RNA sequence: GGGAACGACUCGAGUAGAGUCGAAAACGCACGCCUCUCCUGCUAGCCGUGUGGCUCUUAAAGAGCCCCACACCCCUCCGCCCUGCGUGCUCCUCCGACCCCCGCCACCCCUCCCCUCUCCUCCGGAUCUACUACUCAAGUUCGCUUGAGUAGUAGAAAAAGAAACAACAACAACAAC
Reactivity to DMS in 0.01 (KOAc 150mM, MgCl2 10mM, bicine 150mM(pH8.5), 24C), signal-to-noise 1, nucleotides 027 to 126: c210g010c050a050c040g010c040c060u000c050u010c050c030u010g000c070u000a080g030c200c130g020u010g000u000g010g010c000u010c010u010u020a060a170a110g000a030g000c010c030c010c010a020c050a230c080c010c010c020u000c020c060g000c040c010c000u010g010c050g000u000g020c070u000c010c000u000c010c010g000a220c000c000c000c000c000g010c070c050a090c030c010c020c000u000c010c020c000c010u000c000u000c010c020u000c010c030g020g000a280